[RMDB]
RNA sequence: GGGAACGACUCGAGUAGAGUCGAAAAUCACUUAAGUCAGAAAUUUCAAAGCUGUGAAGGACACAAUUGUGCCCAUAUAUGGUAUAUAUAUUUCUUGCUAAGUAUCAACGACCGAAUCGGUAUAGCAACACAUAAACUAGUUCGCUAGUUUAUGUGUAAAAGAAACAACAACAACAAC
Reactivity to DMS in 0.01 (KOAc 150mM, MgCl2 10mM, bicine 150mM(pH8.5), 24C), signal-to-noise 7, nucleotides 027 to 126: u000c110a040c020u000u000a040a050g030u010c160a040g000a040a030a040u000u000u010c110a100a200a260g010c030u000g010u000g020a180a170g010g010a020c000a010c010a300a160u010u010g010u000g010c000c000c010a040u010a100u010a010u000g000g010u000a180u010a120u000a040u000a030u010u000u000c020u000u010g020c010u010a020a030g010u010a060u010c090a050a150c140g010a070c030c030g010a060a120u010c070g010g000u000a050u000a070g010c120a080
Reactivity to 2A3 in 0.01 (KOAc 150mM, MgCl2 10mM, bicine 150mM(pH8.5), 24C), signal-to-noise 6, nucleotides 027 to 126: u050c010a010c010u050u040a130a000g020u020c020a010g050a040a060a060u090u190u120c110a150a150a040g030c030u020g020u030g100a100a060g010g020a000c000a000c010a140a300u300u300g000u010g000c000c010c000a020u070a010u020a000u110g000g040u060a070u000a010u000a000u000a020u240u020u000c000u000u000g000c000u010a020a030g000u000a040u150c040a070a070c080g040a020c010c030g060a080a090u140c050g000g030u070a080u090a120g060c030a030